[RMDB]
RNA sequence: GGGAACGACUCGAGUAGAGUCGAAAAGUCAGACCUUGUUCUUGCUUGAGGUGCUCGAAAGCCGCAUUGCGGUCAUUCUCCUGUGCAGUCUCCGAACAGCUACGCCCAAAGACGAGAUAGUCCAGAGAGAUUUGUAGAUAUUCGGAGACAAGGACGAUAUCCGAUGGUGUUUCGACACCAUCGGAUAAAAAGAAACAACAACAACAAC
Reactivity to 2A3 in 0.01 (KOAc 150mM, MgCl2 10mM, bicine 150mM(pH8.5), 24C), signal-to-noise 1, nucleotides 027 to 156: g140u100c050a000g020a090c010c030u030u170g160u090u030c050u070u060g020c010u000u010g010a020g010g090u020g150c040u000c030g030a140a000a000g000c020c000g080c300a300u060u300g020c000g000g080u000c000a060u230u130c030u030c020c000u040g040u060g000c130a070g020u030c000u000c000c000g010a070a030c020a020g100c010u010a000c010g030c000c000c000a070a200a050g060a000c010g010a000g060a300u200a060g020u000c020c120a000g060a000g050a000g020a240u070u100u300g030u000a000g000a030u030a040u100u010c000g000g050a010g000a000c000a000a000g000g000a050c020g020a020
Chemical mapping of a 207-nucleotide RNA with 2A3. Reactivities are given for positions 27 through 156. The RNA was probed in 150 mM KOAc, 10 mM MgCl2 and 150 mM bicine (pH 8.5) at 24 C. Source: RMDB library OK3TST, as collected in RNAgym.